[RMDB]
RNA sequence: GGGAACGACUCGAGUAGAGUCGAAAAGAAAGCCACCUUCUGUGCCCCCAGCACCACGUGUCUGGGCCACGUGAGCAACGCCACGUGGGCCUGACGUGGAGCUGGGGCCGCAGGGGUCUGAUGGCAACAAUUAAACCAUAUUCGUAUGGUUUAAUUGAAAAGAAACAACAACAACAAC
Reactivity to DMS in 0.01 (KOAc 150mM, MgCl2 10mM, bicine 150mM(pH8.5), 24C), signal-to-noise 9, nucleotides 027 to 126: g010a100a110a150g010c010c000a050c050c000u000u000c000u000g010u000g000c300c000c000c000c000a010g010c000a070c010c000a000c010g000u010g010u020c080u000g010g010g000c010c000a010c000g020u000g000a080g010c030a130a120c300g000c110c000a010c000g020u000g010g010g000c000c000u010g000a020c000g020u000g000g010a020g020c000u000g000g000g000g020c070c000g000c000a010g000g000g000g000u010c110u030g010a110u010g010g000c000a130a200
Reactivity to 2A3 in 0.01 (KOAc 150mM, MgCl2 10mM, bicine 150mM(pH8.5), 24C), signal-to-noise 9, nucleotides 027 to 126: g080a040a090a000g020c000c000a010c010c010u080u090c000u050g010u010g000c010c000c000c000c000a000g000c010a010c010c000a000c000g060u090g080u060c080u100g030g020g010c000c000a000c000g000u010g020a090g010c090a210a110c220g010c010c000a000c000g000u010g020g070g030c000c000u010g000a000c000g000u000g000g000a000g000c000u000g000g010g000g000c000c000g000c000a000g010g000g010g010u030c070u110g130a210u080g000g000c000a020a010
Conditions: 150 mM KOAc, 10 mM MgCl2 and 150 mM bicine (pH 8.5), 24 C. An RNA of 177 nucleotides, treated with DMS and 2A3 and read out base by base. It was measured as part of the RMDB libraries RFM100 and RFMREP. DMS adducts were read by reverse transcription with MarathonRT.